[RMDB]
RNA sequence: GGGAACGACUCGAGUAGAGUCGAAAAGGCGUCUUCGCUGCCUCGGCCGCCGUGCACUGACCGGUAGCCGCCGUAAUAGCGGCAUUGUUCCCAUAAACGGAUGUGGGUGUGGGUGUCGAAGUAGCAGCAGUAUGGUGCUCUUCGGAGCACCAUACUGAAAAGAAACAACAACAACAAC
Reactivity to 2A3 in 0.01 (KOAc 150mM, MgCl2 10mM, bicine 150mM(pH8.5), 24C), signal-to-noise 2, nucleotides 027 to 126: g090g050c110g100u070c050u080u060c120g020c020u020g010c010c000u020c030g030g000c000c070g020c030c000g070u050g050c010a030c010u050g110a060c010c000g040g000u020a020g000c010c010g000c000c000g010u020a010a120u150a110g000c020g010g020c000a000u080u300g010u060u010c000c020c000a040u130a010a180a030c020g010g060a070u120g040u160g300g020g040u040g010u030g030g020g000u040g020u000c010g020a020a000g000u070a020g030c020a000g030
Reactivity to DMS in 0.01 (KOAc 150mM, MgCl2 10mM, bicine 150mM(pH8.5), 24C), signal-to-noise 2, nucleotides 027 to 126: g000g010c070g010u000c060u000u010c090g030c020u010g020c000c000u010c040g020g000c000c070g010c000c000g020u000g000c020a060c060u000g000a140c020c000g000g010u000a130g040c020c000g040c000c040g000u010a140a080u020a100g020c000g010g040c010a170u010u020g000u010u000c010c000c000a140u000a030a100a080c050g010g000a090u000g030u000g010g000g010u000g010u000g010g000g040u010g000u020c010g020a030a020g020u010a050g020c030a160g000